[RMDB]
RNA sequence: GGGAACGACUCGAGUAGAGUCGAAAAAGACAUGAUCCAUUCACCAAACAAGAACUCACUGAAAACCUGCUGUGUGCAGAUCCUUCCUUGUGAGGCACAUCGAGGGGAAAACUGUUCUGGCUUGUGGAGUCCUACCAUGGUUCGCCAUGGUAGGACUAAAAGAAACAACAACAACAAC
Reactivity to DMS in 0.01 (KOAc 150mM, MgCl2 10mM, bicine 150mM(pH8.5), 24C), signal-to-noise 2, nucleotides 027 to 126: a080g000a120c060a050u010g020a090u000c030c050a100u000u000c000a060c070c040a120a080a060c090a060a030g020a060a070c050u000c080a080c070u000g000a070a040a180a140c050c060u000g040c050u020g050u000g010u020g010c020a040g000a120u010c040c030u000u000c090c080u010u050g030u020g000a090g000g010c040a060c050a030u000c220g030a070g000g000g000g000a060a060a060a050c090u000g020u000u000c020u010g020g000c070u000u000g020u020g010g010
Reactivity to 2A3 in 0.01 (KOAc 150mM, MgCl2 10mM, bicine 150mM(pH8.5), 24C), signal-to-noise 1, nucleotides 027 to 126: a000g080a040c040a080u150g050a080u010c020c010a020u080u130c050a050c080c050a100a100a060c040a020a060g040a050a040c020u000c080a090c040u100g020a050a040a070a070c000c010u030g020c060u040g070u040g050u030g050c020a010g000a130u000c000c000u030u060c020c000u060u010g040u070g060a060g100g000c060a010c000a040u110c050g020a020g000g000g000g100a000a020a040a040c050u050g000u050u040c030u030g010g030c010u120u060g030u040g040g090
The record gives the reactivity of an RNA of 177 nucleotides to DMS and 2A3. For DMS the reverse transcriptase was MarathonRT. The reactions ran in a buffer of 150 mM KOAc, 10 mM MgCl2 and 150 mM bicine (pH 8.5), at 24 C. For 2A3 the reverse transcriptase was SuperScript II with manganese. DMS (dimethyl sulfate) methylates the pairing face of unpaired adenines and cytosines.